This 177-nucleotide RNA was probed chemically with DMS and 2A3. The 2A3 profile rests on 7,345 reads.

RNA sequence: GGGAACGACUCGAGUAGAGUCGAAAACAUAUGAGGUUUACCAUGAGAGUGAAACCCAAGAAAGGUUUAGUGUCAGGCACCAGAGUGGUCCUGGGGAUGUGGACACUACAAAAGCCCUCGACGCUGGAGCGUAGAAGGUAUUCGUACCUUCUACGCUAAAAGAAACAACAACAACAAC
Reactivity to DMS in 0.01 (KOAc 150mM, MgCl2 10mM, bicine 150mM(pH8.5), 24C), signal-to-noise 6, nucleotides 027 to 126: c060a120u040a040u030g020a090g000g000u010u010u010a060c010c020a180u020g010a160g010a120g030u020g010a030a020a060c020c000c020a100a080g020a100a100a070g000g010u020u010u020a010g010u000g000u000c010a050g000g020c040a100c090c070a080g020a100g030u020g020g020u000c020c000u000g000g010g010g000a120u020g020u010g000g010a060c020a010c020u000a040c260a070a050a070a110g010c040c000c020u010c080g000a040c100g010c040u010g000g010
Reactivity to 2A3 in 0.01 (KOAc 150mM, MgCl2 10mM, bicine 150mM(pH8.5), 24C), signal-to-noise 8, nucleotides 027 to 126: c020a030u200a060u200g080a120g040g010u030u030u060a080c010c030a090u190g130a040g010a020g120u100g040a030a000a020c020c010c020a050a020g160a090a090a030g080g030u070u090u080a010g000u030g000u020c030a020g060g000c040a030c040c010a030g030a050g100u150g040g100u080c000c040u060g020g010g030g010a120u110g020u050g180g000a010c000a010c010u060a040c050a020a100a010a010g010c010c000c010u060c050g040a030c020g020c050u100g070g040

Description
For DMS, 11,775 sequencing reads were counted. DMS adducts were read by reverse transcription with MarathonRT. The RNA was probed in 150 mM KOAc, 10 mM MgCl2 and 150 mM bicine (pH 8.5) at 24 C.